[RMDB]
RNA sequence: GGGAACGACUCGAGUAGAGUCGAAAAACCGGAGGCCGACAAUCCAGGGAACCGGAUGUCAUCACGCUGUUGCAGUACCAGAUGGCAUCUUAAAUCCGAUCUGCAAAUAAGCAUGUAGAAAGCUGAUAAAAUCACACACACUUCGGUGUGUGUGAAACACAAACUAUCACUUCGGUGAUAGUUUGUGAAAAGAAACAACAACAACAAC
Reactivity to 2A3 in 0.01 (KOAc 150mM, MgCl2 10mM, bicine 150mM(pH8.5), 24C), signal-to-noise 2, nucleotides 027 to 156: a000c000c010g040g040a030g030g010c040c040g020a060c070a100a060u040c040c030a030g050g000g030a040a050c010c050g000g000a000u000g000u000c010a010u000c000a030c090g020c050u060g070u280u200g070c040a010g010u090a120c050c030a040g010a010u000g000g000c000a010u000c000u010u070a060a140a030u000c010c010g030a080u000c010u030g000c000a000a000a120u060a090a030g040c020a020u110g020u010a030g130a140a070a010g000c020u030g050a020u120a060a130a010a020u010c000a000c000a000c000a000c000a000c010u050u100c230g080g000u000g000u000g040u000g000u000g000a000a010a000
Reactivity to DMS in 0.01 (KOAc 150mM, MgCl2 10mM, bicine 150mM(pH8.5), 24C), signal-to-noise 1, nucleotides 027 to 156: a060c040c040g000g020a190g020g000c060c050g000a100c070a170a120u010c000c010a140g060g010g040a120a050c100c070g080g000a040u000g060u000c000a110u000c030a170c190g040c010u000g000u000u000g000c000a120g000u000a100c070c050a100g000a070u010g000g030c030a030u000c020u000u010a100a160a090u000c050c060g050a070u000c020u020g040c020a090a130a040u000a090a150g000c040a110u010g000u010a050g000a020a110a190g020c030u000g000a070u020a140a050a040a140u000c000a000c000a020c000a000c010a000c000u000u030c300g100g040u000g050u010g020u000g030u010g000a000a040a140

This 207-nucleotide RNA was probed chemically with 2A3 and DMS.
The data come from the RNA Mapping Database (RMDB), library M2RFPK.
Values cover nucleotides 27 to 156.
For DMS the reverse transcriptase was MarathonRT.